[RMDB]
RNA sequence: GGGAACGACUCGAGUAGAGUCGAAAACCCACGUGGUUCGCCACGUGGGAAAUAAUUUCAGCGGUAAUUCGAGGCCAAAUAUUACCGCUGAUGGCCUCGAAAAAAGUACACAGUUCGCUGUGUACAACUUCUAACGUGUCUUCGGACACGUUAGAAGAAAAGAAACAACAACAACAAC
Reactivity to DMS in 0.01 (KOAc 150mM, MgCl2 10mM, bicine 150mM(pH8.5), 24C), signal-to-noise 1, nucleotides 027 to 126: c000c000c000a020c020g080u000g000g000u000u020c210g030c000c000a010c000g010u000g020g010g010a010a010a050u010a100a120u000u000u020c020a010g020c040g000g010u010a010a060u000u020c120g020a070g000g000c020c080a030a100a090u010a070u000u010a090c010c000g030c010u000g010a010u000g000g010c010c000u000c100g000a000a000a020a140a050a100g030u000a010c010a000c000a010g000u010u020c170g000c020u000g000u000g010u000a000c010a020a130
Reactivity to 2A3 in 0.01 (KOAc 150mM, MgCl2 10mM, bicine 150mM(pH8.5), 24C), signal-to-noise 2, nucleotides 027 to 126: c000c000c000a000c000g010u000g000g030u060u070c200g040c050c000a000c020g000u020g000g010g000a000a070a030u130a020a080u050u090u060c030a020g000c000g030g030u070a030a100u080u060c040g020a060g100g000c040c010a000a090a050u230a050u070u100a040c010c000g000c000u010g020a000u000g020g010c000c000u060c070g000a170a000a000a000a000a000g000u010a000c000a000c000a010g030u060u070c100g050c150u000g000u000g000u000a000c000a010a020

The record gives the reactivity of an RNA of 177 nucleotides to DMS and 2A3.
2A3 adducts were read by reverse transcription with SuperScript II with manganese.
Conditions: 150 mM KOAc, 10 mM MgCl2 and 150 mM bicine (pH 8.5), 24 C.